The record gives the reactivity of an RNA of 207 nucleotides to 2A3.
Reactivities are given for positions 27 through 156.
2A3 adducts were read by reverse transcription with SuperScript II with manganese.
The data come from the RNA Mapping Database (RMDB), library OK3TST.
[RMDB]
RNA sequence: GGGAACGACUCGAGUAGAGUCGAAAAGGUCAGUCUGCAGGAGGUUCUAGUGUGGACACCGCCCUACACAGGGCCGUGGCAGGAGGGCCUAGGCAAAGGCAACCGGCAUAGCACUGAGAGCACUUGAGGGCUGGGCAAGGUGGAGGCCCCGGCCCUGCAGUACGACGUGUUUCGACACGUCGUACUGAAAAGAAACAACAACAACAAC
Reactivity to 2A3 in 0.01 (KOAc 150mM, MgCl2 10mM, bicine 150mM(pH8.5), 24C), signal-to-noise 2, nucleotides 027 to 156: g030g000u000c000a010g020u000c040u050g020c030a000g030g230a050g080g060u040u020c040u150a120g040u040g000u010g010g050a030c030a040c070c060g020c010c000c000u090a100c130a010c020a060g010g000g000c000c020g070u070g120g000c030a020g000g000a000g040g000g000c000c010u020a040g020g000c080a140a030a080g000g010c040a070a080c000c010g030g020c030a060u080a030g000c020a020c080u050g030a030g010a000g160c050a020c100u040u060g080a030g000g020g000c030u000g000g000g010c040a100a080g010g030u070g020g000a020g000g090c000c000c010c010g010g010c000c000c000u020g020